[RMDB]
The record gives the reactivity of an RNA of 177 nucleotides to 2A3 and DMS. It was measured as part of the RMDB library M2PK50. The RNA was probed in 150 mM KOAc, 10 mM MgCl2 and 150 mM bicine (pH 8.5) at 24 C. For 2A3 the reverse transcriptase was SuperScript II with manganese.

RNA sequence: GGGAACGACUCGAGUAGAGUCGAAAACUUGGGCACUUCGGUGCCCAAGAAACGCUCAACCUCAGAGCGCAAAUGUCGAACGAAUACAGUUCGACAUGAGGAAAACGGACCCGUUCGCGGGUCCGAACAUCGUUGUCUAGUUCGCUAGACAACGAUGAAAAGAAACAACAACAACAAC
Reactivity to 2A3 in 0.01 (KOAc 150mM, MgCl2 10mM, bicine 150mM(pH8.5), 24C), signal-to-noise 1, nucleotides 027 to 126: c000u000u010g000g020g020c000a000c000u020u020c220g100g000u010g020c010c020c000a010a000g010a000a000a000c010g020c000u020c020a090a120c000c000u010c000a000g000a010g020c070g030c200a040a020a080u060g010u000c000g000a010a010c000g020a120a030u300a230c100a120g010u000u000c000g010a000c010a000u010g010a000g000g000a040a030a010a010c010g010g000a010c020c040c000g000u020u030c150g000c020g090g000g020u000c000c000g000a000a020
Reactivity to DMS in 0.01 (KOAc 150mM, MgCl2 10mM, bicine 150mM(pH8.5), 24C), signal-to-noise 1, nucleotides 027 to 126: c010u000u010g010g000g010c000a010c010u000u000c190g030g000u000g010c000c000c000a000a000g000a090a110a260c000g020c010u000c000a130a070c060c010u000c010a090g000a040g010c000g000c190a020a130a060u000g010u010c000g000a010a000c010g000a130a180u030a140c210a070g020u000u000c020g010a010c010a000u000g010a020g010g000a050a070a130a190c000g020g000a000c000c000c030g050u000u020c250g000c020g000g030g010u000c000c000g000a030a140